[RMDB]
RNA sequence: GGGAACGACUCGAGUAGAGUCGAAAAGAAUGCUCGUCCUCUCCUAAGAAAAAGAAUCCACACGCCUACCUAAGAAAAAGAAUGGAGAGGACGAGCUAAGAAAAGAAUGGUAGGCGUGUGGUAAGAAGGGAAAUAUCUAGUUCGCUAGAUAUUUCCCAAAAGAAACAACAACAACAAC
Reactivity to 2A3 in 0.01 (KOAc 150mM, MgCl2 10mM, bicine 150mM(pH8.5), 24C), signal-to-noise 3, nucleotides 027 to 126: g070a070a090u250g000c000u010c000g000u000c010c000u000c000u050c000c000u190a140a070g140a110a150a060a020a000g180a020a060u060c000c000a010c000a000c000g000c000c000u010a010c000c020u150a130a010g090a170a150a020a000a000g130a070a050u200g000g000a000g000a000g020g000a010c000g000a000g010c010u000a030a000g000a000a020a010a000g090a000a070u120g000g000u000a020g000g020c010g010u000g000u010g000g000u010a000a000g100a060a030
Reactivity to DMS in 0.01 (KOAc 150mM, MgCl2 10mM, bicine 150mM(pH8.5), 24C), signal-to-noise 1, nucleotides 027 to 126: g030a220a030u000g030c030u030c030g000u000c020c000u010c000u000c000c000u010a110a160g010a040a030a130a230a030g000a140a270u070c000c000a000c000a000c030g020c030c020u000a000c010c000u060a150a060g020a030a040a060a040a120g000a120a120u010g030g000a010g030a000g000g030a040c000g000a000g000c010u030a000a050g000a090a050a180a040g000a060a070u000g020g000u000a010g020g000c000g020u000g000u020g000g030u000a070a170g010a070a120